[RMDB]
RNA sequence: GGGAACGACUCGAGUAGAGUCGAAAAAUGCCAGAAUGACAAAGUCCGUUCUUGAACGGACUAGGUGGUCCACACCGGUGUUUCGGACAGCGGUUCGAUUCCGCUCAGCUCCAUUCUCCCUUCGGGGCACAUCGAGAUCAUUCGUGAUCUCGAUGUGAAAAGAAACAACAACAACAAC
Reactivity to DMS in 0.01 (KOAc 150mM, MgCl2 10mM, bicine 150mM(pH8.5), 24C), signal-to-noise 4, nucleotides 027 to 126: a070u020g000c030c010a140g020a120a090u010g000a120c070a110a120a060g010u000c010c010g010u000u000c080u010u030g020a030a000c020g010g000a020c000u000a000g000g040u000g000g000u030c060c160a130c060a070c050c010g010g000u000g000u010u020u000c110g010g020a070c090a040g020c020g020g000u030u020c200g000a300u000u030c030c010g030c010u020c080a150g000c070u000c010c030a140u010u040c070u000c000c020c020u010u030c150g030g010g020g000
Reactivity to 2A3 in 0.01 (KOAc 150mM, MgCl2 10mM, bicine 150mM(pH8.5), 24C), signal-to-noise 6, nucleotides 027 to 126: a020u080g020c010c020a060g090a110a190u160g030a090c050a060a180a010g010u000c000c020g010u040u040c060u140u290g120a020a000c010g010g000a000c000u000a000g010g040u040g020g050u060c060c030a080c000a010c030c010g030g010u060g050u010u070u040c050g020g000a020c020a020g000c000g050g000u000u080c030g030a020u110u000c010c020g000c000u010c020a010g010c010u010c010c010a050u100u030c050u060c030c000c000u020u040c140g010g000g010g020